Annotation:
This 177-nucleotide RNA was probed chemically with 2A3 and DMS. The 2A3 profile rests on 19,781 reads. The reactions ran in a buffer of 150 mM KOAc, 10 mM MgCl2 and 150 mM bicine (pH 8.5), at 24 C.

RNA sequence: GGGAACGACUCGAGUAGAGUCGAAAACAGCGACCUCGUUGGCAACGCUUACGGCGCGUCUGUCAGUGAUACAGCGCAGCUCAAGCUGAAAGACAGCACCCUGAGCGACAACUCGCUCGGCGGGGCCAUCUGUGUUGAAUUUCGAUUCAACACAGAUAAAAGAAACAACAACAACAAC
Reactivity to 2A3 in 0.01 (KOAc 150mM, MgCl2 10mM, bicine 150mM(pH8.5), 24C), signal-to-noise 5, nucleotides 027 to 126: c030a020g080c030g100a200c000c010u020c020g020u020u040g020g000c020a040a030c020g000c010u050u050a050c110g030g000c010g010c010g040u030c020u020g040u010c000a020g020u020g070a010u060a070c040a020g020c140g020c220a050g000c020u010c040a040a010g000c010u010g020a070a020a000g030a020c040a050g000c000a040c000c000c010u010g000a000g010c010g040a030c040a130a070c050u050c120g010c020u100c060g010g000c020g000g000g000g000c010c000
Reactivity to DMS in 0.01 (KOAc 150mM, MgCl2 10mM, bicine 150mM(pH8.5), 24C), signal-to-noise 9, nucleotides 027 to 126: c100a110g010c120g000a060c040c030u000c040g020u000u010g020g010c020a090a130c030g010c010u000u010a050c300g010g010c110g030c010g000u000c020u000g000u000c020a040g010u000g020a140u010a120c250a040g000c010g030c170a110g010c010u000c060a120a300g010c010u010g000a050a050a040g000a050c030a070g030c010a050c010c010c040u010g010a010g000c010g010a070c210a080a120c280u000c050g000c000u010c000g010g000c060g010g000g000g020c030c060